[RMDB]
RNA sequence: GGGAACGACUCGAGUAGAGUCGAAAAUCUGAUGAAGCAAAUCCACAAGUUGUGCGAAUUUCGCGCCCGUCGAGUCGGGCCUCACGACGACCUUCUCUAACGCCCUUGCCAGGUGAGCUUCCUCCUCGUCCCGCACUUGGUUCGCCAAGUGCGGGACAAAAGAAACAACAACAACAAC
Reactivity to 2A3 in 0.01 (KOAc 150mM, MgCl2 10mM, bicine 150mM(pH8.5), 24C), signal-to-noise 1, nucleotides 027 to 126: u040c040u090g000a100u110g080a090a010g030c150a000a000a190u030c010c020a000c020a080a080g110u100u120g010u120g000c080g050a030a030u010u210u100c120g000c000g010c000c000c000g060u040c080g050a020g000u110c000g010g010g000c000c000u070c050a040c030g140a020c000g080a080c000c030u060u130c000u100c020u000a030a020c010g030c010c000c000u000u040g000c050c100a090g050g000u020g020a020g000c000u020u020c030c000u010c000c000u110c090